Structure probing data (2A3) for a 177-nucleotide construct. Source: RMDB library OK1LIB, as collected in RNAgym. 2A3 is a SHAPE reagent: it acylates the 2'-hydroxyl of flexible nucleotides of all four kinds. The reactions ran in a buffer of 150 mM KOAc, 10 mM MgCl2 and 150 mM bicine (pH 8.5), at 24 C. Reactivities are rounded to 0.1 and cut off at 0 and 3.

RNA sequence: GGGAACGACUCGAGUAGAGUCGAAAACUCAUCUUUCACAUUCGGGUUGGAGAAUUUAAACCCUUCGUUCAGACCUUCUUUUACGAAGUCCAGCUGUGUACCGUCCAGAAAUUGCAGGCUCUUGCCGCUGGCGACUACCAUUCGUGGUAGUCGCCAGAAAAGAAACAACAACAACAAC
Reactivity to 2A3 in 0.01 (KOAc 150mM, MgCl2 10mM, bicine 150mM(pH8.5), 24C), signal-to-noise 1, nucleotides 027 to 126: c020u020c020a030u170c030u020u200u040c110a050c000a000u180u090c010g000g000g050u000u000g040g000a210g200a030a000u030u050u040a070a100a100c000c000c000u000u000c000g070u100u100c000a100g170a070c000c000u120u000c000u060u300u010u120a040c050g010a000a000g030u000c040c000a030g000c060u030g010u000g030u050a020c000c020g000u000c000c000a020g080a040a160a020u140u060g020c040a000g020g020c000u050c080u130u150g090c030c000g000